[RMDB]
RNA sequence: GGGAACGACUCGAGUAGAGUCGAAAAGGGCGCCGGGUUACGGGCGGCGUACCACGACUUCGCCACUGCAAUGGCGAAACGACGCGAUGCAACUCAACUCCUGGAGGUGACAUGAGUGAUCUGGUGCAGUAUGCAAUCAUUUCGAUGAUUGCAUACUAAAAGAAACAACAACAACAAC
Reactivity to DMS in 0.01 (KOAc 150mM, MgCl2 10mM, bicine 150mM(pH8.5), 24C), signal-to-noise 8, nucleotides 027 to 126: g000g000g010c030g020c010c010g020g010g010u000u000a040c070g010g020g030c070g000g000c030g010u000a080c110c070a130c090g010a090c160u000u000c010g010c000c000a060c090u000g030c300a120a140u000g000g010c000g010a010a010a050c030g000a050c050g010c020g000a070u000g010c040a060a070c040u010c040a060a090c100u000c020c040u010g010g000a060g000g010u000g000a100c050a060u000g000a100g010u000g000a030u000c020u000g010g010u000g010c060
The record gives the reactivity of an RNA of 177 nucleotides to DMS. The data come from the RNA Mapping Database (RMDB), library OK2TRN. The DMS profile rests on 14,472 reads.